[RMDB]
RNA sequence: GGGAACGACUCGAGUAGAGUCGAAAAGGUAAAAAUCUCAAAAUUUCGAUUUUCACCAAUCCGAUUCACUCUGUAAUAAAGAAUAAACAACAUACAGCCAUUGACACACCCAAAUUUAGGCACGUCACAAGGAGUGCGAUUUCGAUCGCACUCCUUGAAAAGAAACAACAACAACAAC
Reactivity to 2A3 in 0.01 (KOAc 150mM, MgCl2 10mM, bicine 150mM(pH8.5), 24C), signal-to-noise 2, nucleotides 027 to 126: g020g000u040a020a030a060a030a070u030c070u050c110a060a110a140a130u150u220u120c080g010a010u000u010u010u040c060a020c000c000a030a010u050c000c010g020a000u000u020c000a020c000u070c000u060g040u070a040a120u070a130a110a000g160a030a030u120a090a080a060c140a070a000c010a050u140a020c040a000g000c020c030a090u030u110g000a030c000a020c010a000c050c000c000a000a060a090u050u110u010a000g000g000c020a010c040g030u040c050a010
Reactivity to DMS in 0.01 (KOAc 150mM, MgCl2 10mM, bicine 150mM(pH8.5), 24C), signal-to-noise 1, nucleotides 027 to 126: g000g000u000a000a000a060a020a060u000c000u030c110a010a130a100a100u000u150u030c260g000a050u010u000u000u000c020a030c010c000a040a070u050c170c000g040a000u000u000c120a030c000u000c020u000g030u030a180a060u130a040a160a070g000a110a100u050a090a040a000c150a010a100c190a170u000a100c090a050g000c010c060a000u000u000g010a090c000a110c130a090c050c000c010a070a060a040u000u000u110a110g000g000c090a010c100g000u090c000a160

The data come from the RNA Mapping Database (RMDB), library RFM100. The record gives the reactivity of an RNA of 177 nucleotides to 2A3 and DMS. Values cover nucleotides 27 to 126. The 2A3 profile rests on 741 reads.